[RMDB]
RNA sequence: GGGAACGACUCGAGUAGAGUCGAAAAAAAUAACUGACAAGGAAUUGGACAAGAAAAUGAAGGAGCUCGCCGCCGUCAUGAGCGACCCUGACCUGGAAACUGAGACUAUGUGCCUCCACGACGAUGACCUAAGUAGGUGUUUCGACACCUACUUAGGAAAAGAAACAACAACAACAAC
Reactivity to DMS in 0.01 (KOAc 150mM, MgCl2 10mM, bicine 150mM(pH8.5), 24C), signal-to-noise 2, nucleotides 027 to 126: a100a030a090u010a070a100c090u020g010a110c090a110a060g000g000a110a110u000u020g010g000a120c090a070a080g000a070a060a060a070u020g010a120a060g010g030a180g000c090u000c050g030c050c040g030c050c020g000u000c060a040u020g000a070g010c030g030a050c050c030c020u010g000a080c090c030u010g030g000a040a080a060c100u000g010a060g010a050c060u010a040u000g000u000g000c050c010u000c020c050a070c080g000a050c090g030a110u010g010a190
Reactivity to 2A3 in 0.01 (KOAc 150mM, MgCl2 10mM, bicine 150mM(pH8.5), 24C), signal-to-noise 1, nucleotides 027 to 126: a000a000a000u100a000a020c010u010g050a010c020a010a090g120g030a110a130u100u050g010g040a000c020a140a120g110a040a230a020a020u200g040a070a040g060g000a030g090c050u000c030g060c010c020g050c020c000g100u100c020a070u130g030a000g120c030g030a040c000c020c000u020g030a020c000c030u010g000g100a070a050a060c030u150g040a040g010a050c060u100a080u130g030u090g020c020c010u040c010c010a030c030g090a010c030g050a040u120g040a050
This 177-nucleotide RNA was probed chemically with DMS and 2A3. The 2A3 profile rests on 914 reads. Reactivities are given for positions 27 through 126. The DMS profile rests on 1,351 reads. DMS adducts were read by reverse transcription with MarathonRT. For 2A3 the reverse transcriptase was SuperScript II with manganese.